RNA sequence: GGGAACGACUCGAGUAGAGUCGAAAAUAUUCGCGCAAAGCGAGGAAGAGGAGCCAUUCUCCAACUAAGAAACUGCGCUACGUUAAGCGUAGAUUUUCUCUUCUGCGCCAUGAAGACCUUAGUGUUACCAGUGCCAUGAGUUCGCUCAUGGCACUGGAAAAGAAACAACAACAACAAC
Reactivity to DMS in 0.01 (KOAc 150mM, MgCl2 10mM, bicine 150mM(pH8.5), 24C), signal-to-noise 1, nucleotides 027 to 126: u020a070u030u090c160g000c050g000c020a000a120a280g000c170g000a090g000g000a110a050g050a300g030g000a000g000c030c140a170u060u000c000u080c000c000a000a090c270u030a030a000g000a100a190a070c000u000g020c020g000c000u000a030c300g030u170u090a160a170g000c000g020u000a000g000a090u060u000u000u000c110u030c000u000u000c000u000g020c000g020c000c050a020u000g050a300a200g000a050c060c000u030u030a060g000u000g000u000u030a190
Reactivity to 2A3 in 0.01 (KOAc 150mM, MgCl2 10mM, bicine 150mM(pH8.5), 24C), signal-to-noise 2, nucleotides 027 to 126: u240a020u040u050c000g000c020g000c040a080a010a020g020c030g100a000g000g000a000a150g030a070g030g000a020g000c000c100a100u050u040c040u000c000c000a040a120c080u100a100a000g060a090a130a000c000u000g000c040g020c000u120a100c300g220u180u150a020a020g000c020g000u050a000g000a010u000u030u000u030c010u000c000u000u000c010u050g000c000g030c000c000a090u150g020a020a020g010a080c000c020u080u130a020g060u030g110u210u010a010
Conditions: 150 mM KOAc, 10 mM MgCl2 and 150 mM bicine (pH 8.5), 24 C.
The record gives the reactivity of an RNA of 177 nucleotides to DMS and 2A3.
Reactivities are given for positions 27 through 126.
For DMS the reverse transcriptase was MarathonRT.
For 2A3 the reverse transcriptase was SuperScript II with manganese.
The 2A3 profile rests on 810 reads.
As a SHAPE reagent, 2A3 marks flexible, mostly unpaired nucleotides at the ribose 2'-OH.
For DMS, 741 sequencing reads were counted.